This 177-nucleotide RNA was probed chemically with 2A3 and DMS.
RNA sequence: GGGAACGACUCGAGUAGAGUCGAAAAUAGCUGACGUUCGCGUCAGCUAAAAGCACCAAAACCUCCAGGCGGUGCGGCGCCGGCCCCGCCGGGAAGGCCGCCAACUCGAUGGGUUCGCCCAUCGAAAUCUUCCAAUAGGUUUCGACCUAUUGGAAGAAAAAGAAACAACAACAACAAC
Reactivity to 2A3 in 0.01 (KOAc 150mM, MgCl2 10mM, bicine 150mM(pH8.5), 24C), signal-to-noise 2, nucleotides 027 to 126: u040a000g000c000u000g000a000c030g010u050u000c300g020c010g090u010c000a010g000c000u000a010a000a010a000g000c010a070c080c000a020a010a050a240c020c040u050c040c020a040g040g000c000g030g030u080g180c030g020g030c070g040c020c040g010g040c050c050c070c090g020c000c000g000g020g010a030a010g080g010c000c000g000c010c000a020a020c040u000c010g000a000u010g000g020g020u020u060c190g070c040c010c020a000u000c010g000a010a000a000
Reactivity to DMS in 0.01 (KOAc 150mM, MgCl2 10mM, bicine 150mM(pH8.5), 24C), signal-to-noise 3, nucleotides 027 to 126: u020a020g010c000u000g000a020c000g030u000u010c190g010c010g000u000c000a000g010c000u010a000a020a090a110g000c110a130c030c030a080a050a100a300c070c010u000c060c020a110g010g020c030g000g020u010g000c030g000g010c070g020c040c030g010g000c020c090c200c090g010c020c010g010g000g000a080a090g010g010c040c020g010c030c050a130a070c200u000c000g000a010u010g000g000g020u000u010c190g020c010c000c010a020u000c000g010a020a090a050
Values cover nucleotides 27 to 126. DMS (dimethyl sulfate) methylates the pairing face of unpaired adenines and cytosines. For DMS, 2,355 sequencing reads were counted.